Chemical mapping of a 207-nucleotide RNA with DMS and 2A3. For DMS the reverse transcriptase was MarathonRT. The RNA was probed in 150 mM KOAc, 10 mM MgCl2 and 150 mM bicine (pH 8.5) at 24 C.

RNA sequence: GGGAACGACUCGAGUAGAGUCGAAAAGGCGCUUCGGCGCCAAAAAAACCUUUGUGACGGUACUGUUGGAGCUAAUCGUCGGAUGUUCCCAUUGGGAACGGAUGACGAUGCCACAACAAUCUACCGUCACUCUGGUAAAAACCCACUUCGGUGGGAACACCUUAUAAUAGUUCGCUAUUAUAAGGUGAAAAGAAACAACAACAACAAC
Reactivity to DMS in 0.01 (KOAc 150mM, MgCl2 10mM, bicine 150mM(pH8.5), 24C), signal-to-noise 1, nucleotides 027 to 156: g000g030c000g020c040u000u030c230g060g040c000g040c000c000a000a000a040a070a040a040a000c000c000u000u000u000g000u010g030a030c000g010g030u010a000c130u000g000u000u010g000g010a130g080c100u010a070a010u000c000g000u000c010g020g000a300u000g010u000u010c000c010c010a300u000u000g040g020g000a030a030c020g000g010a300u000g000a000c000g020a010u000g010c020c010a060c010a000a010c040a000a030u010c030u010a030c000c000g010u000c000a000c020u000c030u020g020g080u000a020a060a030a090a100c030c000c010a000c040u010u010c200g000g010u010g000g020g010a110a090
Reactivity to 2A3 in 0.01 (KOAc 150mM, MgCl2 10mM, bicine 150mM(pH8.5), 24C), signal-to-noise 2, nucleotides 027 to 156: g000g010c060g000c100u130u180c260g110g000c040g000c040c050a110a000a000a000a040a000a010c000c020u010u000u000g000u000g010a000c010g000g000u010a010c010u040g050u000u010g010g020a130g020c040u150a270a050u000c020g000u010c020g000g020a010u050g000u000u010c080c020c050a300u230u300g000g000g000a000a000c000g000g010a020u030g000a000c010g000a010u000g000c000c000a060c010a020a000c000a010a010u050c050u050a000c000c000g000u000c000a000c000u020c000u000g010g000u040a030a030a000a040a030c020c010c020a020c010u060u060c240g070g000u010g010g010g020a000a030
It was measured as part of the RMDB library RNAMAK. Reactivities are rounded to 0.1 and cut off at 0 and 3.